[RMDB]
An RNA of 207 nucleotides, treated with DMS and 2A3 and read out base by base. DMS adducts were read by reverse transcription with MarathonRT. The reactions ran in a buffer of 150 mM KOAc, 10 mM MgCl2 and 150 mM bicine (pH 8.5), at 24 C. The data come from the RNA Mapping Database (RMDB), library OK3TST. For 2A3 the reverse transcriptase was SuperScript II with manganese.
RNA sequence: GGGAACGACUCGAGUAGAGUCGAAAAUGGUGAUCUAGCUAGGCUAGUGUUUAGGAUAAAACAGGACUACAGCGUAGAAUUUGAAAAGUUAUUGGACGACAGUCCAGGACUUUUUGAAGCUCUUAACUUGGGUCAUCAGGCUCAUUUUAAGGAGAAGCUAUCCGUAGGUGUUCGCACCUACGGAUAGAAAAGAAACAACAACAACAAC
Reactivity to DMS in 0.01 (KOAc 150mM, MgCl2 10mM, bicine 150mM(pH8.5), 24C), signal-to-noise 1, nucleotides 027 to 156: u000g050g030u020g000a060u000c030u000a050g050c020u010a110g000g030c020u000a050g000u010g030u020u000u000a100g030g010a150u000a060a060a100a100c060a100g010g010a110c000u010a030c060a090g060c040g030u000a050g000a060a080u010u010u000g010a000a050a010a030g040u000u000a140u010u010g010g030a030c000g010a190c300a210g020u000c010c010a040g000g010a020c000u000u000u000u000u010g000a030a010g000c130u000c000u000u010a000a000c020u000u000g050g010g040u010c000a120u000c280a120g030g000c000u000c030a040u010u000u000u020a050a020g030g000a060g020a090a100g030
Reactivity to 2A3 in 0.01 (KOAc 150mM, MgCl2 10mM, bicine 150mM(pH8.5), 24C), signal-to-noise 3, nucleotides 027 to 156: u080g020g020u040g020a080u040c030u030a020g060c010u030a040g040g060c020u020a020g060u010g050u070u060u080a110g000g020a080u110a080a060a050a030c060a060g030g040a010c050u050a040c100a070g010c030g070u100a050g070a110a130u000u020u070g010a030a000a000a000g000u000u000a160u300u000g000g000a000c010g020a040c100a020g000u000c000c000a000g000g010a000c000u010u040u000u000u030g020a000a040g000c030u000c000u060u010a010a000c010u040u050g000g010g030u010c030a140u130c130a220g020g010c000u000c010a010u000u020u020u070a080a030g110g030a130g050a040a030g000